[RMDB]
RNA sequence: GGGAACGACUCGAGUAGAGUCGAAAAGUAAUUUGCCGAUUUAUCCACUCGCCAGAAUACAGCUUCACCGGCAUCAGCCAGACGGGGGGAAAACUGAUACCCAAGUAGCCAGAACAGGCCAAAUAUAUGCCUAGUACAUAUUCGUAUGUACUAGGCAAAAAGAAACAACAACAACAAC
Reactivity to DMS in 0.01 (KOAc 150mM, MgCl2 10mM, bicine 150mM(pH8.5), 24C), signal-to-noise 2, nucleotides 027 to 126: g000u000a090a160u000u000u000g010c140c040g030a150u000u000u000a060u020c050c070a060c110u000c040g000c050c040a110g000a050a060u000a080c080a080g020c050u000u000c030a070c060c060g000g010c050a090u010c090a060g030c060c040a060g010a100c060g000g030g000g000g050g000a050a040a070a060c030u020g000a080u020a140c030c000c030a080a140g010u010a140g030c030c040a090g000a070a080c270a110g000g000c020c170a090a050a090u010a060u000a120

Structure probing data (DMS) for a 177-nucleotide construct. For DMS, 1,072 sequencing reads were counted. The data come from the RNA Mapping Database (RMDB), library OK2TST. Values cover nucleotides 27 to 126. The RNA was probed in 150 mM KOAc, 10 mM MgCl2 and 150 mM bicine (pH 8.5) at 24 C.